[RMDB]
RNA sequence: GGGAACGACUCGAGUAGAGUCGAAAAUCCAUCUCUUUCCGGAAGGCCGUUAUGACGGCGAGCCCACCGAGAUCGAUCUCGAUCUGGAGGACGCCACCGACGAUAGUCCUCCCGAUCUCCCUGCCGGGAUUAGGCGUAUCUUCGGAUACGCCUAAUCAAAAGAAACAACAACAACAAC
Reactivity to DMS in 0.01 (KOAc 150mM, MgCl2 10mM, bicine 150mM(pH8.5), 24C), signal-to-noise 3, nucleotides 027 to 126: u030c010c040a060u010c050u000c020u000u010u010c030c070g010g010a160a120g000g030c000c020g010u000u030a110u010g010a080c090g010g010c020g000a100g020c080c020c030a120c140c030g000a030g000a030u000c090g020a130u010c180u000c040g010a010u000c000u000g000g020a040g000g020a020c000g010c140c080a090c090c050g010a050c160g010a110u010a170g000u000c020c000u020c000c000c080g010a000u000c010u000c000c010c000u000g000c020c040g010g010
Reactivity to 2A3 in 0.01 (KOAc 150mM, MgCl2 10mM, bicine 150mM(pH8.5), 24C), signal-to-noise 9, nucleotides 027 to 126: u020c000c000a050u000c020u000c000u040u130u040c030c020g020g030a070a040g110g000c010c000g020u050u110a200u300g190a090c080g010g000c000g000a010g000c000c010c010a070c020c050g030a020g000a050u020c010g010a030u030c080u060c150g000a010u000c010u000g010g000a000g000g000a010c020g080c040c030a150c070c070g150a170c070g070a160u100a100g010u000c000c000u010c000c000c000g000a010u000c010u020c010c000c010u070g050c040c030g100g020